[RMDB]
Annotation: The record gives the reactivity of an RNA of 177 nucleotides to DMS and 2A3. Reactivities are given for positions 27 through 126. The reactions ran in a buffer of 150 mM KOAc, 10 mM MgCl2 and 150 mM bicine (pH 8.5), at 24 C.
RNA sequence: GGGAACGACUCGAGUAGAGUCGAAAAUGUGGUCCGAAGAUCAUUAUCUUUUUGGAUGAACUUGAUGAUCCAAAUGUGAGAAUCAUUUUAGAAUGCAGAAUUUAAAUUACAACAUUGUGUUUUGCUCCCAAAAAGCACUAUUCGUAGUGCUUUUUGGAAAAGAAACAACAACAACAAC
Reactivity to DMS in 0.01 (KOAc 150mM, MgCl2 10mM, bicine 150mM(pH8.5), 24C), signal-to-noise 4, nucleotides 027 to 126: u020g030u000g000g000u000c020c040g030a030a050g000a040u000c140a030u010u030a100u020c020u000u000u000u000u010g010g010a040u010g000a050a060c100u010u000g010a140u000g010a060u000c010c010a050a040a080u020g020u070g020a080g000a150a090u010c030a020u000u000u010u030a050g010a050a080u020g010c050a040g010a140a080u010u010u020a060a090a050u020u030a090c140a030a100c160a060u000u020g010u000g000u000u000u000u000g000c300u020c060
Reactivity to 2A3 in 0.01 (KOAc 150mM, MgCl2 10mM, bicine 150mM(pH8.5), 24C), signal-to-noise 7, nucleotides 027 to 126: u110g040u030g020g010u020c030c030g070a020a010g000a020u030c050a080u120u300a070u080c070u050u100u030u100u130g020g010a010u020g020a070a060c030u090u100g040a050u070g020a020u040c010c000a030a070a080u190g040u090g020a030g010a060a050u020c020a030u000u040u040u090a130g060a170a110u130g050c030a020g120a070a070u090u150u180a130a130a070u170u100a080c030a060a020c050a070u050u080g020u010g030u050u010u020u030g040c020u040c010